[RMDB]
RNA sequence: GGGAACGACUCGAGUAGAGUCGAAAAAGCUGCAGUUUGGGAACCAGACCCUGCAUGUGUCCACCGUGCAGAUGUGGCUACUGCUGUAUCUCAACGACCUGAAGGUGGCCCAGCCCCGCUGCACCUCUCGUACACACGCAUUCGUGCGUGUGUACGAAAAAGAAACAACAACAACAAC
Reactivity to DMS in 0.01 (KOAc 150mM, MgCl2 10mM, bicine 150mM(pH8.5), 24C), signal-to-noise 2, nucleotides 027 to 126: a040g020c250u010g010c010a030g020u000u010u000g040g010g010a130a070c080c120a030g000a110c260c100c000u010g000c010a020u000g010u010g020u020c030c050a080c300c060g000u000g010c030a030g000a050u010g020u000g000g000c000u000a090c030u000g010c060u000g010u010a080u000c080u000c000a100a100c170g000a050c100c030u000g000a070a120g000g000u000g000g000c040c020c020a050g010c010c020c030c220g000c030u000g010c030a030c100c040u010c110
Reactivity to 2A3 in 0.01 (KOAc 150mM, MgCl2 10mM, bicine 150mM(pH8.5), 24C), signal-to-noise 1, nucleotides 027 to 126: a020g080c090u040g000c020a010g020u140u230u180g030g040g020a070a030c030c010a040g060a110c010c000c040u020g000c050a050u040g100u000g050u030c000c030a060c150c000g020u020g000c030a010g010a090u100g110u180g060g030c010u040a030c030u180g040c030u010g070u090a070u030c040u000c000a140a110c010g170a140c060c040u110g100a140a010g020g000u050g010g010c000c030c000a000g000c020c000c010c000g000c010u000g000c000a010c000c010u090c000